[RMDB]
RNA sequence: GGGAACGACUCGAGUAGAGUCGAAAAUCGUUUAUGUGCGACAUGAACGCAGUGGAUACUGUCCUACAGUAUCCAGAUGGCCUCUGUAGAACAGACGCCAGAGCUAAUCUGUCGCACAGAUUAGCGAGGACAGCUCUCUAUUCGUAGAGAGCUGUCCAAAAGAAACAACAACAACAAC
Reactivity to 2A3 in 0.01 (KOAc 150mM, MgCl2 10mM, bicine 150mM(pH8.5), 24C), signal-to-noise 1, nucleotides 027 to 126: u010c000g000u000u000u040a030u000g000u020g010c020g000a000c020a020u170g030a050a020c080g000c040a060g090u050g040g000a000u000a010c000u010g040u160c060c050u080a040c020a000g000u010a010u000c000c000a000g010a080u010g010g000c020c000u000c000u000g040u020a090g020a300a040c000a000g000a000c000g000c000c000a010g000a000g000c000u010a070a070u010c000u000g010u000c000g000c000a000c000a000g000a030u030u070a010g020c010g010a050
Reactivity to DMS in 0.01 (KOAc 150mM, MgCl2 10mM, bicine 150mM(pH8.5), 24C), signal-to-noise 2, nucleotides 027 to 126: u000c000g010u000u010u010a090u000g040u000g000c010g000a000c000a000u010g000a070a200c210g010c080a210g010u000g000g000a020u000a000c000u000g010u000c180c190u010a100c010a000g000u000a010u000c000c000a000g000a090u000g000g000c010c020u010c000u000g000u010a070g000a040a300c040a000g000a020c130g000c010c000a040g000a110g000c010u000a040a070u000c060u000g020u000c020g000c000a040c000a000g000a090u000u000a010g000c010g010a080
Structure probing data (2A3 and DMS) for a 177-nucleotide construct. For 2A3 the reverse transcriptase was SuperScript II with manganese.